[RMDB]
RNA sequence: GGGAACGACUCGAGUAGAGUCGAAAAGAGUUCCUUUGAACGCUUCAUGCAUGAGAAUAUCUAUUUGGUCUAAAAUCCAUUAGAAAAAUAGUUCUUCUUAAAUGAAGUGUUUGGGGGAACUCUUGGGUGCCCCACUUAGGUUCGCCUAAGUGGGGCAAAAAGAAACAACAACAACAAC
Reactivity to 2A3 in 0.01 (KOAc 150mM, MgCl2 10mM, bicine 150mM(pH8.5), 24C), signal-to-noise 2, nucleotides 027 to 126: g010a000g000u000u000c000c000u000u000u000g010a000a000c010g000c000u000u040c010a000u020g190c000a080u220g010a000g000a040a010u010a030u030c000u000a020u050u070u050g300g070u030c010u010a000a000a070a190u070c040c020a080u040u050a000g000a000a050a000a000a000u010a000g050u000u000c000u030u000c000u020u030a170a220a000u020g000a000a010g000u000g010u000u000u000g000g000g000g020g010a000a000c000u000c000u000u000g000g020g040
Structure probing data (2A3) for a 177-nucleotide construct. As a SHAPE reagent, 2A3 marks flexible, mostly unpaired nucleotides at the ribose 2'-OH.